[RMDB]
RNA sequence: GGGAACGACUCGAGUAGAGUCGAAAAUUGAGAUGCAUCAGUAAGAUGGGCAUAAUGACAGGAAAUCAGCAGCUCCAAGAGGGCAGAAACUGUGCUCCUGUUUGCUAGCCCUGACCUCAUACCUGGUAUUCAGUAUGCAGGAAGAAGGUUUAGUAAAUGGACCUACCAUAUUCGUAUGGUAGGUCCAAAAAGAAACAACAACAACAAC
Reactivity to DMS in 0.01 (KOAc 150mM, MgCl2 10mM, bicine 150mM(pH8.5), 24C), signal-to-noise 1, nucleotides 027 to 156: u000u000g000a080g000a150u000g020c020a240u000c050a090g030u000a060a110g000a070u000g000g000g030c000a090u000a050a110u000g020a020c000a020g010g000a020a090a300u000c020a020g080c010a280g030c010u000c010c010a110a170g040a300g010g000g010c000a080g020a160a020a030c050u000g000u010g020c300u010c010c030u000g010u000u000u020g020c040u020a180g020c000c020c020u000g020a160c020c020u000c070a050u020a020c000c050u000g020g030u000a080u000u000c140a140g020u000a000u020g000c020a030g020g000a140a080g000a160a070g010g000u000u000u000a080g050u010a070a090a130
Reactivity to 2A3 in 0.01 (KOAc 150mM, MgCl2 10mM, bicine 150mM(pH8.5), 24C), signal-to-noise 1, nucleotides 027 to 156: u120u110g050a050g000a000u050g130c040a150u060c040a030g110u050a060a010g000a240u030g000g000g010c010a040u070a170a100u230g000a010c000a000g000g020a000a040a060u020c000a000g060c020a000g000c000u000c020c040a160a140g030a300g010g040g000c020a000g110a160a150a000c000u020g010u000g000c000u000c000c000u010g020u000u000u030g030c000u050a000g000c010c010c060u030g000a000c000c010u020c000a010u030a080c000c050u030g000g000u100a160u150u270c030a060g030u000a060u040g080c030a000g000g000a030a020g070a000a090g020g050u110u000u000a090g000u110a010a170a130